Background:
Chemical mapping of a 177-nucleotide RNA with DMS and 2A3. DMS adducts were read by reverse transcription with MarathonRT. As a SHAPE reagent, 2A3 marks flexible, mostly unpaired nucleotides at the ribose 2'-OH. The RNA was probed in 150 mM KOAc, 10 mM MgCl2 and 150 mM bicine (pH 8.5) at 24 C.
[RMDB]
RNA sequence: GGGAACGACUCGAGUAGAGUCGAAAAGACCAGGCCUGCGACGGCCUAGCAGCAACCAGGGUGGGACAACCGGAGCCGGCGAAUAUGCCGGUCGGGAGCUCGGUUGUUCGUGGGAGCUCGGUGACCGCAUACCGAUUAGGUUCGCCUAAUCGGUAUGAAAAGAAACAACAACAACAAC
Reactivity to DMS in 0.01 (KOAc 150mM, MgCl2 10mM, bicine 150mM(pH8.5), 24C), signal-to-noise 9, nucleotides 027 to 126: g010a120c020c020a080g010g010c020c000u000g010c160g010a100c120g000g000c000c010u000a030g020c090a090g020c070a080a180c030c010a110g010g010g030u020g010g010g010a070c060a060a070c000c000g000g010a200g000c000c010g000g000c000g010a130a140u010a100u010g010c000c010g010g010u000c030g000g000g010a110g010c050u000c040g010g010u000u000g000u000u000c030g020u000g010g010g000a230g000c030u000c070g020g010u000g010a180c030c030g000
Reactivity to 2A3 in 0.01 (KOAc 150mM, MgCl2 10mM, bicine 150mM(pH8.5), 24C), signal-to-noise 6, nucleotides 027 to 126: g070a010c000c010a000g020g020c000c010u060g020c030g050a030c050g010g010c000c000u000a010g000c020a000g010c010a020a050c010c020a060g120g090g150u240g070g070g030a040c020a050a020c010c000g060g010a060g060c010c010g010g010c010g040a170a110u290a120u300g010c010c010g000g010u020c010g000g050g020a060g020c030u020c040g010g000u020u020g030u070u020c020g020u050g020g010g000a060g040c010u020c050g000g040u040g020a060c010c020g000